[RMDB]
RNA sequence: GGGAACGACUCGAGUAGAGUCGAAAAUGCAUUUUUGAAUAGUCGCUUGAAGAUACUUUGCUCUACAUCGACUUUGGCUGUGGGGAUCAAUCUUCCAGCAUAUUUGGUUAUUAUAAAGGGGACAAAACGCACGACCUAUAUUCGUAUAGGUCGUGCGAAAAGAAACAACAACAACAAC
Reactivity to 2A3 in 0.01 (KOAc 150mM, MgCl2 10mM, bicine 150mM(pH8.5), 24C), signal-to-noise 1, nucleotides 027 to 126: u140g000c030a070u060u090u080u090u190g050a010a000u050a030g110u110c040g000c000u010u030g010a040a070g000a030u010a060c080u020u030u160g070c000u000c000u000a020c020a110u020c000g020a000c000u210u020u020g040g030c100u020g000u070g000g000g030g000a040u120c030a000a030u000c020u030u020c000c000a000g000c000a000u000a020u040u050u080g070g000u090u060a160u110u110a040u200a150a140a040g120g110g000g000a000c030a020a250a000a000

An RNA of 177 nucleotides, treated with 2A3 and read out base by base. Conditions: 150 mM KOAc, 10 mM MgCl2 and 150 mM bicine (pH 8.5), 24 C. It was measured as part of the RMDB library OK1LIB.